The record gives the reactivity of an RNA of 177 nucleotides to 2A3 and DMS. It was measured as part of the RMDB library OK1LIB. 2A3 adducts were read by reverse transcription with SuperScript II with manganese. High DMS reactivity at an A or C suggests that its Watson-Crick edge is free. The reactions ran in a buffer of 150 mM KOAc, 10 mM MgCl2 and 150 mM bicine (pH 8.5), at 24 C. The 2A3 profile rests on 70,877 reads. The DMS profile rests on 152,943 reads.

[RMDB]
RNA sequence: GGGAACGACUCGAGUAGAGUCGAAAACUAUUUAUAGACAGAACAGUGGAAAACGUAUAUCGCUAUAAACCUCAAACACGGAUUCUUCCAGUCGUACGAUUCCACAUAGGCGAGGCAUAAGCGAAAGGUAUUGUUUAUUAUUCGUAGUGAGCAAUGCAAAAGAAACAACAACAACAAC
Reactivity to 2A3 in 0.01 (KOAc 150mM, MgCl2 10mM, bicine 150mM(pH8.5), 24C), signal-to-noise 9, nucleotides 027 to 126: c010u010a070u040u160u040a160u070a030g090a030c060a020g100a180a010c030a050g040u060g050g030a030a040a020a010c010g020u020a040u010a010u130c010g000c010u010a010u060a070a060a040c000c010u030c040a090a090a030c040a010c050g010g010a020u050u010c000u060u000c020c010a020g030u030c020g000u030a020c030g020a020u040u010c010c000a020c040a050u050a020g060g040c050g010a010g020g020c030a050u050a130a040g000c020g050a030a020a000g120
Reactivity to DMS in 0.01 (KOAc 150mM, MgCl2 10mM, bicine 150mM(pH8.5), 24C), signal-to-noise 9, nucleotides 027 to 126: c020u010a050u020u020u020a060u010a050g010a080c100a100g010a080a070c110a100g010u010g000g010a050a030a080a070c060g010u010a060u020a080u010c030g010c020u000a050u010a060a100a140c030c010u000c030a070a120a090c130a070c120g000g000a040u010u010c070u010u010c040c050a080g010u020c090g000u010a040c090g000a110u010u000c010c010a040c090a090u020a060g010g010c170g010a030g000g010c100a100u010a070a080g000c020g000a030a090a090g010